[RMDB]
RNA sequence: GGGAACGACUCGAGUAGAGUCGAAAAUGUAUCCAUCUUCCAAUAGAAUGGCAACUAGUCAGACAUCUGUUUAGACACCAAAAUCAUUAUUUGUUUUCAUUCAUCUCAUUGGCCGUGUAGUUCAUGUUAAAUUAUAUAAGUUCGCUUAUAUAAUUUAAAAAGAAACAACAACAACAAC
Reactivity to DMS in 0.01 (KOAc 150mM, MgCl2 10mM, bicine 150mM(pH8.5), 24C), signal-to-noise 3, nucleotides 027 to 126: u010g000u010a050u000c030c020a100u010c050u000u000c020c060a060a090u040a100g010a060a040u000g000g010c080a090a080c050u010a040g020u000c040a060g000a080c070a100u030c060u020g010u000u010u020a060g010a110c060a040c050c030a020a040a080a040u010c060a030u020u020a090u010u020u010g010u010u000u010u020c050a060u020u020c080a110u010c030u000c040a030u000u010g010g000c050c060g000u000g000u000a070g010u000u010c040a060u010g000u020
Reactivity to 2A3 in 0.01 (KOAc 150mM, MgCl2 10mM, bicine 150mM(pH8.5), 24C), signal-to-noise 5, nucleotides 027 to 126: u130g010u030a060u030c000c000a030u000c040u040u030c000c010a030a030u070a130g090a070a050u030g040g000c000a020a030c050u070a020g060u040c000a020g030a110c020a120u090c070u040g080u060u090u130a040g020a010c010a010c050c010a040a050a070a070u090c050a060u030u200a080u110u160u060g090u050u100u020u010c020a020u060u020c020a050u000c030u000c010a040u060u060g020g000c030c030g020u030g010u030a090g020u010u070c020a030u060g020u050